[RMDB]
RNA sequence: GGGAACGACUCGAGUAGAGUCGAAAACUUUAGCUGCCAAUUUCUAUAUACUGAGCAUUCACUGGAAUGUACGGUCUACAACUUUCGUUGAAUGCACGUCUUUUUGUAGAUAAGAAAUCCAUUGGCAGAGGUAUGAUCAGUUCGCUGAUCAUACCUCAAAAGAAACAACAACAACAAC
Reactivity to DMS in 0.01 (KOAc 150mM, MgCl2 10mM, bicine 150mM(pH8.5), 24C), signal-to-noise 2, nucleotides 027 to 126: c030u000u020u010a040g000c210u030g030c010c000a000a030u000u010u010c010u000a110u000a090u030a130c040u010g000a160g020c000a000u000u030c000a110c110u000g000g000a000a010u060g000u000a110c090g000g150u060c050u000a060c080a040a030c280u040u010u000c020g010u010u000g060a030a030u050g000c010a110c250g000u020c020u080u000u000u030u000g000u000a000g000a080u000a120a050g010a070a050a080u030c100c120a050u040u000g000g010c000a020
Reactivity to 2A3 in 0.01 (KOAc 150mM, MgCl2 10mM, bicine 150mM(pH8.5), 24C), signal-to-noise 6, nucleotides 027 to 126: c030u160u160u170a050g050c020u030g000c010c000a020a010u020u040u010c040u000a070u010a030u010a130c040u070g050a020g030c000a010u010u000c010a010c070u070g050g030a010a010u060g030u080a060c120g110g050u060c060u070a060c020a070a040c060u030u020u010c030g010u020u060g050a040a040u060g030c030a020c080g160u090c070u010u150u030u050u070g020u010a020g010a040u080a140a060g040a080a060a010u080c090c040a070u030u040g000g000c010a000